This 177-nucleotide RNA was probed chemically with DMS and 2A3. For DMS, 9,390 sequencing reads were counted.
RNA sequence: GGGAACGACUCGAGUAGAGUCGAAAAGAUAUGGACCACUGACGAUUCAACAGCGUCGUUGAAACACAGCUCUUCGGAAACGAAGAGCUGUGUGGAGACGCUGCGCAUUUCGUAGUGGUCCUAAGUCGAAUUUAGUUAUCUUCGGAUAACUAAAUUCAAAAGAAACAACAACAACAAC
Reactivity to DMS in 0.01 (KOAc 150mM, MgCl2 10mM, bicine 150mM(pH8.5), 24C), signal-to-noise 6, nucleotides 027 to 126: g000a080u010a300u000g010g000a010c000c000a010c000u000g020a040c000g010a020u020u000c240a210a120c010a020g000c000g020u000c000g020u010u010g000a280a180a020c000a000c000a010g010c000u000c000u010u000c000g000g000a120a090a210c000g010a010a010g000a020g020c000u000g000u000g010u000g000g010a070g020a010c000g010c000u000g000c030g020c240a300u000u000u000c000g020u000a010g020u000g000g010u000c000c000u000a000a050g020u010c100
Reactivity to 2A3 in 0.01 (KOAc 150mM, MgCl2 10mM, bicine 150mM(pH8.5), 24C), signal-to-noise 4, nucleotides 027 to 126: g040a020u170a080u280g000g000a010c000c010a000c030u140g300a040c040g000a010u090u080c120a140a060c010a070g010c000g000u020c020g070u220u090g020a020a020a010c000a000c000a000g000c000u000c000u010u020c010g090g070a150a150a130c010g000a020a000g020a000g000c000u000g000u000g000u000g000g010a010g000a000c000g000c010u010g000c020g000c050a140u070u070u040c000g010u010a010g000u000g000g010u000c000c000u000a010a000g060u050c070